RNA sequence: GGGAACGACUCGAGUAGAGUCGAAAAUAAGCACCUCGUGAGGUGAGGCGGCUACACGAACAUAGGCCACUGACCCCGAACGUCGAGAGACGCCCCGGGUCAGGACAGCUCUUCCCGGCUUAAGGGUAAAAUCACAACGUCUUCGGACGUUGUGAAAGUAGUAUGCGAUCUUCGGAUCGCAUACUACAAAAGAAACAACAACAACAAC
Reactivity to 2A3 in 0.01 (KOAc 150mM, MgCl2 10mM, bicine 150mM(pH8.5), 24C), signal-to-noise 2, nucleotides 027 to 156: u170a040a020g020c000a020c010c000u020c000g070u060g110a130g000g120u160g050a000g010g040c070g050g000c050u070a020c080a010c160g180a270a000c020a130u210a060g080g120c010c010a030c020u000g000a000c030c020c020c030g020a080a030c000g000u030c000g020a050g010a030g000a150c000g050c060c060c050c030g000g000g000u000c000a000g020g010a000c020a000g000c000u010c000u090u020c000c000c000g040g010c020u070u120a090a040g060g000g040u050a030a020a040a090u020c000a000c000a000a010c000g030u010c000u020u090c250g070g000a000c000g010u000u000g000u000g000a000a000a000